[RMDB]
RNA sequence: GGGAACGACUCGAGUAGAGUCGAAAACUUCGCAAGUGGCGCGAGCAUCUUAAGCAGAAAGGAAGCGAUGAAAUCCUAACUAACACAAUGCCAGUUAGCGAAGGGGGGGAAAUUCUCGCUGAGGUCAUAUCUAUCAAGGUUUCGACCUUGAUAGAUAAAAAGAAACAACAACAACAAC
Reactivity to 2A3 in 0.01 (KOAc 150mM, MgCl2 10mM, bicine 150mM(pH8.5), 24C), signal-to-noise 3, nucleotides 027 to 126: c000u000u010c010g000c000a060a050g100u000g010g010c020g010c060g050a060g030c010a030u050c040u140u030a120a040g040c030a030g070a080a050a000g040g020a040a030g050c120g180a120u170g110a130a080a050u050c010c000u030a050a040c020u040a070a000c090a000c020a150a020u050g040c010c000a160g090u030u050a020g010c030g020a000a020g020g010g000g000g000g000g030a000a100a000u080u010c030u010c020g060c070u080g020a020g060g010u060c000a020
Reactivity to DMS in 0.01 (KOAc 150mM, MgCl2 10mM, bicine 150mM(pH8.5), 24C), signal-to-noise 6, nucleotides 027 to 126: c020u000u000c020g010c010a070a070g020u000g010g000c030g020c170g000a140g000c060a070u000c090u000u010a080a160g020c090a080g000a050a180a050g010g010a080a050g010c080g030a100u020g010a070a080a170u000c010c010u000a060a130c090u000a090a080c100a090c180a080a070u010g010c040c030a030g010u000u000a110g010c030g010a040a050g000g000g000g000g010g010g000a060a080a150u000u000c020u000c040g010c120u010g010a080g000g010u000c080a100